[RMDB]
RNA sequence: GGGAACGACUCGAGUAGAGUCGAAAACAACCACGAUGGCGCAGCUCAAGACGAAUGUGGAAAGUCUGCAUCUGACGUUAAGCGAAGAGGUUCUGGCGGAGAUUGAGGCGGCGCAUCAGGUUUAUACUAGCCCCAUUUAUUUCGAUAAAUGGGGCUAAAAAGAAACAACAACAACAAC
Reactivity to DMS in 0.01 (KOAc 150mM, MgCl2 10mM, bicine 150mM(pH8.5), 24C), signal-to-noise 4, nucleotides 027 to 126: c120a130a100c050c040a110c180g020a040u010g000g020c050g040c000a030g010c000u020c040a100a050g000a070c090g000a080a070u030g040u000g010g010a120a110a120g000u010c020u010g010c060a030u040c020u010g000a070c050g020u000u000a070a080g020c070g010a160a090g010a100g010g010u010u000c040u000g040g030c030g000g000a160g000a100u010u010g010a080g010g020c050g000g030c010g040c030a040u010c020a080g000g020u000u010u010a030u020a130c140
Reactivity to 2A3 in 0.01 (KOAc 150mM, MgCl2 10mM, bicine 150mM(pH8.5), 24C), signal-to-noise 4, nucleotides 027 to 126: c010a000a000c010c000a110c180g010a020u070g060g090c020g000c010a000g020c000u010c010a020a010g030a030c040g050a180a070u150g000u160g070g110a070a040a080g060u040c000u010g000c000a020u010c030u070g060a090c020g000u070u130a070a040g050c060g050a080a020g040a140g060g060u200u070c020u030g030g000c020g000g030a090g000a050u040u070g020a050g060g150c030g010g010c000g000c020a000u010c000a000g040g000u000u050u030a040u010a050c070

Annotation:
This 177-nucleotide RNA was probed chemically with DMS and 2A3. The 2A3 profile rests on 3,184 reads. As a SHAPE reagent, 2A3 marks flexible, mostly unpaired nucleotides at the ribose 2'-OH. Conditions: 150 mM KOAc, 10 mM MgCl2 and 150 mM bicine (pH 8.5), 24 C. Source: RMDB library OK1LIB, as collected in RNAgym.